RNA sequence: GGGAACGACUCGAGUAGAGUCGAAAAAGGCUACCAAGCAGGUGAAGAAGGCAGCCAGUGGCAAGCGCACCAAGGGAUGGUUCGGCGAGGCAGGAGGUGCCCAGGGCCUCGACAAGUGGUACGGCCCAGAAGUUGAGUUUUUCGAAACUCAACUUCUAAAAGAAACAACAACAACAAC
Reactivity to DMS in 0.01 (KOAc 150mM, MgCl2 10mM, bicine 150mM(pH8.5), 24C), signal-to-noise 2, nucleotides 027 to 126: a090g010g030c040u000a070c050c030a130a140g010c020a030g000g020u000g010a070a090g000a090a080g020g000c040a050g020c040c030a100g000u000g000g000c040a080a110g010c040g000c080a070c000c060a040a150g000g000g010a040u010g000g020u010u010c070g000g010c060g010a060g000g010c040a100g000g010a110g020g020u000g000c010c010c040a090g000g000g010c010c010u000c090g000a090c130a080a110g020u010g010g010u010a060c100g010g010c020c030c020
Reactivity to 2A3 in 0.01 (KOAc 150mM, MgCl2 10mM, bicine 150mM(pH8.5), 24C), signal-to-noise 1, nucleotides 027 to 126: a000g080g030c020u040a020c000c000a020a010g110c030a040g000g070u110g050a020a070g050a030a060g140g000c020a000g030c020c010a020g040u090g040g000c040a100a070g020c000g010c010a010c030c020a050a080g150g020g010a070u080g030g000u090u070c020g060g050c040g040a060g000g030c000a050g010g120a050g050g060u080g020c020c000c010a040g000g010g000c000c000u020c000g050a020c010a240a010g060u040g030g000u080a050c070g000g000c020c010c000
This 177-nucleotide RNA was probed chemically with DMS and 2A3. The data come from the RNA Mapping Database (RMDB), library OK2TRN. Values cover nucleotides 27 to 126.